The data come from the RNA Mapping Database (RMDB), library M2RFPK. The record gives the reactivity of an RNA of 207 nucleotides to DMS and 2A3. The reactions ran in a buffer of 150 mM KOAc, 10 mM MgCl2 and 150 mM bicine (pH 8.5), at 24 C. Values cover nucleotides 27 to 156. 2A3 adducts were read by reverse transcription with SuperScript II with manganese.
RNA sequence: GGGAACGACUCGAGUAGAGUCGAAAACAGAACUGGAUGGGCCGUGUGCUGAACCAGGACAAGAUCUCCUUCUCUCCAACGUUGUUGCCAACUCAUGAUUCUCCUAACCUGUGCUUGGAGAGACGUGCUACCAUAUAGGUGUUCGCACCUAUAUGAACAUAUGCUAAAAGUUCGCUUUUAGCAUAUGAAAAGAAACAACAACAACAAC
Reactivity to DMS in 0.01 (KOAc 150mM, MgCl2 10mM, bicine 150mM(pH8.5), 24C), signal-to-noise 4, nucleotides 027 to 156: c060a130g010a110a120c030u010g010g020a090u000g010g010g010c030c010g020u000g030u000g040c000u010g020a140a190c020c030a050g000g000a150c040a080a090g000a150u000c030u010c020c030u000u000c020u000c010u010c020c030a060a100c140g010u030u010g010u000u000g010c010c040a070a110c050u000c030a080u000g000a140u000u000c020u000c020c030u010a040a040c050c070u000g020u000g020c040u000u000g010g010a050g010a020g010a060c050g030u000g000c050u000a160c090c010a020u000a010u000a000g010g020u000g020u010u010c290g040c010a010c000c000u000a010u010a000u000g000a070a170
Reactivity to 2A3 in 0.01 (KOAc 150mM, MgCl2 10mM, bicine 150mM(pH8.5), 24C), signal-to-noise 4, nucleotides 027 to 156: c070a030g070a040a030c000u030g020g020a050u100g200g060g000c060c030g240u190g080u200g070c030u040g030a080a030c010c010a000g030g050a010c040a030a080g050a090u010c020u020c050c000u090u000c000u000c000u020c020c020a060a080c120g010u020u020g010u030u020g000c040c000a060a010c060u040c070a040u070g060a220u160u020c030u050c030c030u060a060a120c020c030u140g070u160g110c070u070u070g000g000a020g010a010g000a010c030g030u050g030c020u090a120c050c000a000u000a000u000a000g000g000u000g030u050u040c180g000c050a000c000c000u000a000u000a000u000g000a020a000